[RMDB]
RNA sequence: GGGAACGACUCGAGUAGAGUCGAAAAGGGCAAACACAGUAGCUGACAUGCAGUGAUGUCUCCAUUCUGUCUUCCCUGACAAGUCCAGAGAAGGCACUGGGUUGGCAUCCAACAGCUUGGUCACAAGUGACAUCAAAGGAUUCGUCCUUUGAUGUCAAAAAGAAACAACAACAACAAC
Reactivity to DMS in 0.01 (KOAc 150mM, MgCl2 10mM, bicine 150mM(pH8.5), 24C), signal-to-noise 8, nucleotides 027 to 126: g010g000g020c080a070a060a090c140a080c100a110g010u020a070g010c080u000g000a050c050a040u010g000c060a070g010u030g000a010u000g010u000c000u030c020c000a040u010u010c230u000g010u010c010u000u000c000c020c000u010g000a140c060a070a070g010u020c080c020a010g010a040g010a030a010g000g010c000a020c210u010g000g000g000u030u020g000g000c000a010u000c020c040a100a070c110a080g000c010u000u010g000g010u000c050a040c100a110a090g020
Reactivity to 2A3 in 0.01 (KOAc 150mM, MgCl2 10mM, bicine 150mM(pH8.5), 24C), signal-to-noise 9, nucleotides 027 to 126: g040g010g020c070a080a110a000c040a020c030a110g120u130a020g030c070u020g020a020c010a080u120g020c030a020g030u030g230a010u000g010u000c010u010c010c000a030u160u070c020u020g000u000c000u000u000c000c000c000u010g010a030c070a200a050g060u050c060c000a000g010a000g000a010a010g000g010c010a010c040u040g000g000g070u190u180g010g000c000a000u000c000c000a030a010c010a010g010c000u030u060g080g010u030c010a010c020a140a060g080
Structure probing data (DMS and 2A3) for a 177-nucleotide construct. The data come from the RNA Mapping Database (RMDB), libraries RFM100 and RFMREP. For DMS the reverse transcriptase was MarathonRT. DMS (dimethyl sulfate) methylates the pairing face of unpaired adenines and cytosines. Reactivities are given for positions 27 through 126.